About this RNA: The record gives the reactivity of an RNA of 177 nucleotides to 2A3 and DMS. Values cover nucleotides 27 to 126. It was measured as part of the RMDB library OK2TST. The RNA was probed in 150 mM KOAc, 10 mM MgCl2 and 150 mM bicine (pH 8.5) at 24 C. DMS adducts were read by reverse transcription with MarathonRT.
[RMDB]
RNA sequence: GGGAACGACUCGAGUAGAGUCGAAAAUGAGGCUCAGAGAGGGAAGGUGAGUUACCCAAGGUCACACAGCAAGUUCAGCCUGCUCUGUAAUGUUGUGGAGGGGCUGGGGCAGCAGUGCCGUUGACUGCACCGCUAUUCCCUUCGGGGAAUAGCGGUGAAAAGAAACAACAACAACAAC
Reactivity to 2A3 in 0.01 (KOAc 150mM, MgCl2 10mM, bicine 150mM(pH8.5), 24C), signal-to-noise 1, nucleotides 027 to 126: u080g030a030g020g050c010u000c050a000g060a010g020a020g030g070g020a040a090g000g010u090g010a040g020u020u060a110c020c030c010a010a030g030g010u040c000a010c010a010c000a050g020c010a020a100g060u050u040c010a000g000c000c010u140g240c040u000c000u000g080u060a120a230u150g120u210u060g020u040g040g000a010g040g010g000g010c000u000g010g000g080g000c000a000g010c000a010g030u000g050c060c050g050u020u070g060a060c000u020g030
Reactivity to DMS in 0.01 (KOAc 150mM, MgCl2 10mM, bicine 150mM(pH8.5), 24C), signal-to-noise 1, nucleotides 027 to 126: u000g000a150g000g010c030u030c010a110g000a140g000a040g000g060g010a060a040g010g010u010g010a080g020u010u000a090c070c000c080a140a120g000g000u000c050a090c120a060c060a050g030c060a000a090g030u000u010c030a030g000c060c020u000g020c000u010c010u010g010u000a040a080u000g020u020u000g000u000g000g010a060g010g010g000g000c060u000g000g000g000g040c070a090g020c090a090g020u000g010c040c020g010u000u000g010a040c050u010g020